[RMDB]
RNA sequence: GGGAACGACUCGAGUAGAGUCGAAAAGAACUGACACCGAGCGAUGUAGGGAAACUGAAUAGGCUUGUGAUACCUAAGAAGUAUGCAGUGAAGUAUAUGCCUUUCAUAAGCGAUGAUCAAAGCGAGAAACGAUCGACGAGUUCGCUCGUCGAUCGUUAAAAGAAACAACAACAACAAC
Reactivity to DMS in 0.01 (KOAc 150mM, MgCl2 10mM, bicine 150mM(pH8.5), 24C), signal-to-noise 1, nucleotides 027 to 126: g010a190a160c020u000g000a110c060a080c070c020g030a130g010c040g010a070u000g000u010a020g000g000g000a070a120a110c070u000g010a120a040u000a080g000g010c070u000u000g000u010g000a050u000a000c040c050u000a060a090g000a130a140g020u000a010u000g010c020a060g000u000g000a050a150g010u010a090u010a030u000g000c110c050u000u000u020c010a050u000a080a110g010c030g000a060u000g000a030u000c070a050a060a070g000c050g010a160g030a060